[RMDB]
RNA sequence: GGGAACGACUCGAGUAGAGUCGAAAAUUGGCGAAUGCCUGUGGAUCUACAUUUGUUGCGGGUUCGAGACCCGUCAGAGCCCGGCUCUGUAGCUCAAUGGUAGAGCGGUGUAUUCACAGAAACUUGUAAAAGACACGUGCCUUCGGGCACGUGUCAAGCAAUCUAAUCUGUUCGCAGAUUAGAUUGCAAAAGAAACAACAACAACAAC
Reactivity to 2A3 in 0.01 (KOAc 150mM, MgCl2 10mM, bicine 150mM(pH8.5), 24C), signal-to-noise 1, nucleotides 027 to 156: u070u100g070g010c010g050a180a010u150g090c000c000u010g000u000g010g040a030u030c070u170a010c010a020u050u040u150g050u030u000g020c010g000g000g000u000u000c010g010a000g010a050c000c000c000g000u000c000a000g000a000g000c000c300c210g140g040c000u000c020u000g000u010a000g000c000u010c020a030a030u150g200g110u150a010g000a000g020c000g010g000u000g000u000a070u050u000c000a000c010a010g020a040a100a060c020u050u130g040u090a100a060a000a010g000a000c000a000c000g000u010g050c020c000u080u100c170g020g000g000c000a000c000g000u000g000u000c000a010a000
Reactivity to DMS in 0.01 (KOAc 150mM, MgCl2 10mM, bicine 150mM(pH8.5), 24C), signal-to-noise 1, nucleotides 027 to 156: u010u060g000g050c040g000a030a030u000g040c050c000u000g100u010g000g010a000u010c100u000a020c050a060u000u030u000g000u000u020g020c010g040g000g000u000u020c000g020a300g040a050c010c000c010g030u000c050a050g000a080g000c000c050c050g040g020c000u020c000u000g010u000a090g020c000u000c000a050a120u010g010g020u000a080g030a040g060c000g000g050u000g000u000a140u000u030c070a110c000a050g010a090a080a120c040u000u000g020u010a020a140a100a250g000a030c000a020c000g020u000g000c000c010u020u000c300g090g010g050c000a000c010g060u020g010u000c000a000a060